[RMDB]
RNA sequence: GGGAACGACUCGAGUAGAGUCGAAAAAUGAGUAGCAGCGCCAUGUGAAAAUGUCGGAAAGCUAGGCUGGAGAGCAAAAAUUCGACCCAAACAGUUUUAGCUGUGGAAAUGUUUGUAGAGGUACAGGGAUGAAAAGCAAAUUCGUUUGCUUUUCAUCAAAAGAAACAACAACAACAAC
Reactivity to DMS in 0.01 (KOAc 150mM, MgCl2 10mM, bicine 150mM(pH8.5), 24C), signal-to-noise 6, nucleotides 027 to 126: a070u010g000a080g010u010a070g020c040a060g010c040g010c040c030a040u000g010u010g010a050a070a090a060u010g000u000c050g010g010a060a070a080g010c040u010a040g010g000c020u000g000g010a080g010a080g010c070a020a060a050a080a100u000u000c080g010a100c030c030c020a050a110a070c020a010g000u010u010u030u020a080g010c020u020g020u010g000g000a050a050a040u010g000u000u000u010g010u000a050g010a100g010g020u000a030c080a060g000g000
Reactivity to 2A3 in 0.01 (KOAc 150mM, MgCl2 10mM, bicine 150mM(pH8.5), 24C), signal-to-noise 5, nucleotides 027 to 126: a010u070g020a030g060u050a000g000c040a000g010c010g010c070c030a050u060g030u020g070a090a070a030a060u110g030u030c020g010g060a130a050a030g030c050u050a040g100g000c010u020g060g020a050g000a030g030c020a020a090a070a030a050u100u070c020g040a050c000c020c000a060a180a030c010a020g010u040u070u140u250a040g010c020u000g000u040g010g060a070a100a080u100g090u020u040u060g040u040a080g010a060g090g050u100a040c040a010g140g060